[RMDB]
RNA sequence: GGGAACGACUCGAGUAGAGUCGAAAAUAUGGUGGCUCAUGUCUAUAAUCCCAGCACUUUGGGAGGUUGAGGUGGGAGGAUUGCUUGAACCCAAGAGGUCAAGGCUGCAGUGAGCCAUGUUCACACCGCUGCACUCAAGCUUGGGUGACAGAACAAGCAUGUACUGUCUCUUCGGAGACAGUACAUGAAAAGAAACAACAACAACAAC
Reactivity to 2A3 in 0.01 (KOAc 150mM, MgCl2 10mM, bicine 150mM(pH8.5), 24C), signal-to-noise 2, nucleotides 027 to 156: u200a020u030g080g030u000g020g010c040u020c050a040u050g050u000c130u090a120u040a090a080u000c000c010c000a010g080c040a070c160u110u070u100g020g020g000a100g040g050u060u110g010a060g030g070u140g040g030g000a030g000g010a020u000u150g040c000u020u040g000a070a060c000c010c040a110a100g050a120g000g000u010c040a020a040g030g000c050u020g020c050a060g010u040g020a000g010c010c040a030u060g060u090u120c060a040c000a010c020c010g060c010u010g010c010a010c030u070c040a050a210g050c040u170u140g000g000g000u010g040a110c030a020g030a050a010c020a010a020g060
Reactivity to DMS in 0.01 (KOAc 150mM, MgCl2 10mM, bicine 150mM(pH8.5), 24C), signal-to-noise 1, nucleotides 027 to 156: u010a090u000g030g030u000g030g000c040u000c030a030u000g000u000c070u040a180u000a060a140u000c010c000c020a240g010c100a050c140u030u020u000g000g040g030a090g000g020u000u040g000a080g010g000u010g020g050g020a110g040g000a070u000u010g030c090u030u000g000a130a040c000c000c000a090a120g020a150g050g030u000c060a090a040g020g030c080u000g000c090a100g040u020g000a130g010c020c060a070u000g000u000u000c030a050c010a000c010c040g000c020u000g000c000a170c040u000c090a040a150g010c110u000u000g000g000g020u000g000a160c140a010g000a030a020c060a040a300g000
Chemical mapping of a 207-nucleotide RNA with 2A3 and DMS. The data come from the RNA Mapping Database (RMDB), library OK3TST. For 2A3, 1,053 sequencing reads were counted. Reactivities are rounded to 0.1 and cut off at 0 and 3. For DMS the reverse transcriptase was MarathonRT. The RNA was probed in 150 mM KOAc, 10 mM MgCl2 and 150 mM bicine (pH 8.5) at 24 C.